[RMDB]
RNA sequence: GGGAACGACUCGAGUAGAGUCGAAAACUGUGAGGCUUCGGCCUCACAGAUAGGUUUCUUUUUAGAGAUUUUUCCAAACCCCUUUGUGCAAAAAUCAUUAAACUCGCGUACGUUUCGACGUACGCAACCCAUAAAAUCGAUUCGUCGAUUUUAUGGGAAAAGAAACAACAACAACAAC
Reactivity to DMS in 0.01 (KOAc 150mM, MgCl2 10mM, bicine 150mM(pH8.5), 24C), signal-to-noise 3, nucleotides 027 to 126: c010u000g000u010g010a020g010g010c000u000u010c200g040g000c000c010u000c000a000c000a010g010a050u010a080g000g000u000u000u000c000u010u000u000u000u010a110g020a230g000a020u000u000u000u000u010c000c010a020a010a070c020c010c030c050u000u020u000g010u000g000c150a010a020a010a030a000u000c010a090u000u000a060a040a100c280u010c110g020c000g000u000a010c000g020u000u000u030c180g030a010c000g000u000a010c010g010c000a010a020
Reactivity to 2A3 in 0.01 (KOAc 150mM, MgCl2 10mM, bicine 150mM(pH8.5), 24C), signal-to-noise 3, nucleotides 027 to 126: c000u000g000u000g000a000g030g000c050u060u100c300g130g000c020c000u020c000a000c010a000g000a000u040a010g040g000u040u010u010c000u040u040u020u030u060a090g040a010g000a130u000u030u000u020u010c010c000a020a040a090c040c050c010c000u040u120u040g040u080g000c040a000a010a000a010a040u060c020a020u070u250a080a130a050c090u060c140g010c000g000u000a010c010g000u000u020u140c210g040a020c000g000u000a000c000g000c000a000a010

This 177-nucleotide RNA was probed chemically with DMS and 2A3.
2A3 adducts were read by reverse transcription with SuperScript II with manganese.
Reactivities are rounded to 0.1 and cut off at 0 and 3.
The reactions ran in a buffer of 150 mM KOAc, 10 mM MgCl2 and 150 mM bicine (pH 8.5), at 24 C.